[RMDB]
RNA sequence: GGGAACGACUCGAGUAGAGUCGAAAAGAUAUGGACGAUCAGCUUGGACCGUGUGUAUCGGAAACGAUACCACGCUAGCUGCAGAGUCCUAAGUCAAAACUCGAGAAUGGUUCGCCAUUCUCGAGAACGGACUAACUCUCUUCGGAGAGUUAGUCCGAAAAGAAACAACAACAACAAC
Reactivity to DMS in 0.01 (KOAc 150mM, MgCl2 10mM, bicine 150mM(pH8.5), 24C), signal-to-noise 2, nucleotides 027 to 126: g000a090u020a300u010g010g000a020c010g010a300u000c100a030g010c010u000u040g030g000a040c300c080g040u000g000u020g030u000a000u000c000g040g000a070a070a100c000g000a020u000a010c010c000a000c000g010c020u010a020g020c010u010g000c240a000g000a300g040u000c010c000u000a040a080g000u000c030a100a130a080a150c010u000c000g010a020g000a000a010u000g000g010u000u000c150g000c000c010a010u000u000c000u000c000g000a000g000a010a080
Reactivity to 2A3 in 0.01 (KOAc 150mM, MgCl2 10mM, bicine 150mM(pH8.5), 24C), signal-to-noise 1, nucleotides 027 to 126: g040a000u050a040u070g000g010a000c000g000a040u020c080a000g060c020u210u270g120g130a250c150c090g000u020g000u020g000u010a000u000c000g010g000a140a000a000c010g000a010u000a000c040c000a020c020g070c030u010a010g000c010u010g050c080a030g010a010g080u010c000c000u000a070a000g020u020c030a030a020a120a180c000u000c000g000a000g010a000a030u020g020g090u090u090c260g030c060c000a010u010u000c000u040c000g000a010g000a000a000
Chemical mapping of a 177-nucleotide RNA with DMS and 2A3. The RNA was probed in 150 mM KOAc, 10 mM MgCl2 and 150 mM bicine (pH 8.5) at 24 C. For DMS the reverse transcriptase was MarathonRT. Reactivities are given for positions 27 through 126. For 2A3, 2,023 sequencing reads were counted.